The record gives the reactivity of an RNA of 177 nucleotides to DMS and 2A3. For DMS the reverse transcriptase was MarathonRT. Source: RMDB library TTRDES, as collected in RNAgym.
RNA sequence: GGGAACGACUCGAGUAGAGUCGAAAAGAUAUGGAGACGUGAUGGACAUGCCAGAUCCGUGUCGGAAACGACACGGUGGCAACAGCCAUACGUCUCCUAAGUCAAAACCGUAAAGUUCGCUUUACGGCAUGUUCGGGUUGUUCGCAACCCGAACAUGAAAAGAAACAACAACAACAAC
Reactivity to DMS in 0.01 (KOAc 150mM, MgCl2 10mM, bicine 150mM(pH8.5), 24C), signal-to-noise 2, nucleotides 027 to 126: g010a020u000a300u010g000g000a010g020a000c010g010u000g010a010u000g010g030a030c060a300u000g030c000c000a130g000a110u000c010c000g040u000g020u000c000g010g000a050a030a100c020g010a010c000a000c020g010g030u000g000g040c020a040a020c210a120g020c010c000a020u000a050c000g010u000c000u000c000c000u000a000a040g000u000c030a110a130a150a250c010c010g000u010a000a020a030g000u000u000c300g000c000u010u000u000a000c000g000g020
Reactivity to 2A3 in 0.01 (KOAc 150mM, MgCl2 10mM, bicine 150mM(pH8.5), 24C), signal-to-noise 1, nucleotides 027 to 126: g030a010u030a010u090g050g000a000g010a000c000g020u220g300a110u000g020g030a030c070a260u300g020c020c000a080g060a260u000c000c010g000u010g000u000c000g010g000a040a030a000c010g000a000c020a000c000g000g000u000g010g000c000a020a010c080a050g090c000c000a000u010a000c000g000u000c010u000c000c000u000a000a000g000u000c030a000a020a100a180c000c000g000u010a000a000a010g020u060u240c300g020c130u000u000u030a010c000g000g050